Chemical mapping of a 177-nucleotide RNA with 2A3. For 2A3, 493 sequencing reads were counted. It was measured as part of the RMDB library OK1LIB.
RNA sequence: GGGAACGACUCGAGUAGAGUCGAAAAUCGAUCAGUUCUUGGACGACACAGGGAGCUUUCGAGAGACACCGGUACUGGUACCGGCCGUCGGUUCUCGAGACGUGCAGGUACGAGAUGCGAUCGUCGGGCCGCAUCGCGAUUUCGAUCGCGAUGCGGCAAAAGAAACAACAACAACAAC
Reactivity to 2A3 in 0.01 (KOAc 150mM, MgCl2 10mM, bicine 150mM(pH8.5), 24C), signal-to-noise 1, nucleotides 027 to 126: u000c000g030a000u030c000a010g050u030u030c000u120u010g090g090a020c000g030a040c000a050c050a080g080g020g060a060g000c090u090u200u200c130g160a180g020a020g040a020c060a050c050c010g000g040u020a020c120u290g220g000u020a070c000c000g000g000c000c000g000u030c030g120g000u070u050c020u050c000g030a100g000a020c050g030u100g050c010a010g080g000u000a020c000g000a010g000a220u010g120c040g000a000u000c010g070u070c050g050g160